[RMDB]
RNA sequence: GGGAACGACUCGAGUAGAGUCGAAAAGGUGGAUACUGUGCAGCCCUCUUCGUAGUCUUUGGCCAAACCUGCCUCCUUCUGGUUUGGGGUAUGCCAGAUAUGGAUGUGAGUGACCACACGAUUGUGUGUUAAGUUCUGUGUGUGGAAACCGCGGAUGUAUUUAAAUGUCAUUCGUGACAUUUAAAUAAAAAGAAACAACAACAACAAC
Reactivity to DMS in 0.01 (KOAc 150mM, MgCl2 10mM, bicine 150mM(pH8.5), 24C), signal-to-noise 3, nucleotides 027 to 156: g000g050u010g010g010a110u000a030c040u000g030u000g020c030a160g010c030c010c030u010c050u000u010c000g030u000a070g000u000c050u000u000u000g020g030c000c040a050a060a080c040c020u000g000c030c010u000c040c080u000u010c030u000g010g020u000u000u000g010g010g020g030u000a070u000g020c030c010a050g020a070u010a050u000g030g010a060u010g000u000g020a130g030u000g010a130c030c020a000c020a030c020g000a120u010u000g010u000g020u000g000u000u000a060a150g010u000u000c020u000g020u000g020u010g040u000g020g000a130a100a050c030c020g020c030g020g010a090u000g010
Reactivity to 2A3 in 0.01 (KOAc 150mM, MgCl2 10mM, bicine 150mM(pH8.5), 24C), signal-to-noise 6, nucleotides 027 to 156: g030g010u040g020g030a040u060a160c040u060g040u120g090c050a060g020c030c040c010u040c050u110u090c040g090u080a080g030u030c050u100u140u110g040g010c040c010a060a070a050c020c030u040g030c010c010u050c010c020u080u100c040u040g030g000u040u070u100g010g000g010g010u060a050u130g010c000c020a010g010a040u090a050u120g050g030a030u060g030u030g050a120g010u040g020a030c030c030a010c010a010c060g130a210u220u130g020u020g020u010g020u140u160a120a040g020u100u010c050u050g080u010g020u020g020u030g040g000a080a030a020c020c020g000c020g030g040a030u070g010

Structure probing data (DMS and 2A3) for a 207-nucleotide construct. Values are in units of 0.01, from 0 to 300, in steps of 10. The reactions ran in a buffer of 150 mM KOAc, 10 mM MgCl2 and 150 mM bicine (pH 8.5), at 24 C.